[RMDB]
Structure probing data (DMS and 2A3) for a 207-nucleotide construct.
RNA sequence: GGGAACGACUCGAGUAGAGUCGAAAAUCAAUCGCAUUGUUGGGUGAAAGUUGGAGGAUAAAUCCUCACCAAGAUUUAAAUUAAGCAAGAGCUAUAAGGCCGCUCCUUAUAUUGCGACUUGCUUAAAGAUAUCCGGCAAAGUUCGCUUUGCCGGAAAGAAUCAAAUAUGGUUCGCCAUAUUUGAUUCAAAAGAAACAACAACAACAAC
Reactivity to DMS in 0.01 (KOAc 150mM, MgCl2 10mM, bicine 150mM(pH8.5), 24C), signal-to-noise 2, nucleotides 027 to 156: u000c070a060a140u020c070g030c100a130u010u000g020u000u000g010g030g030u000g020a090a090a110g040u010u000g000g030a110g000g000a130u010a050a130a170u010c010c000u000c010a080c010c040a050a160g000a130u010u000u010a050a050a190u020u000a010a030g000c000a030a020g000a300g000c030u010a020u000a000a000g000g030c150c300g000c210u010c010c000u000u000a040u000a020u000u000g020c020g010a170c040u000u020g010c000u000u010a000a020a130g000a160u000a060u000c010c000g000g000c010a020a020a010g040u010u000c300g000c020u020u010u000g020c000c030g010g000a010a010a040
Reactivity to 2A3 in 0.01 (KOAc 150mM, MgCl2 10mM, bicine 150mM(pH8.5), 24C), signal-to-noise 1, nucleotides 027 to 156: u050c010a020a020u040c070g050c080a050u050u040g020u030u050g050g030g030u110g090a190a070a080g060u130u050g070g020a000g000g000a010u140a080a180a060u090c010c000u010c000a050c010c000a060a010g030a040u070u120u300a120a130a150u000u010a010a000g000c000a000a000g000a000g000c000u000a000u000a010a000g000g000c110c050g000c070u220c030c000u000u000a000u040a040u000u200g000c010g160a300c050u000u000g000c000u000u000a000a000a020g010a000u040a030u010c000c000g010g000c000a000a060a000g000u000u050c010g000c100u040u000u020g000c000c000g000g010a000a010a000
It was measured as part of the RMDB library M2RFPK. DMS adducts were read by reverse transcription with MarathonRT. Conditions: 150 mM KOAc, 10 mM MgCl2 and 150 mM bicine (pH 8.5), 24 C. For 2A3 the reverse transcriptase was SuperScript II with manganese. For DMS, 2,345 sequencing reads were counted.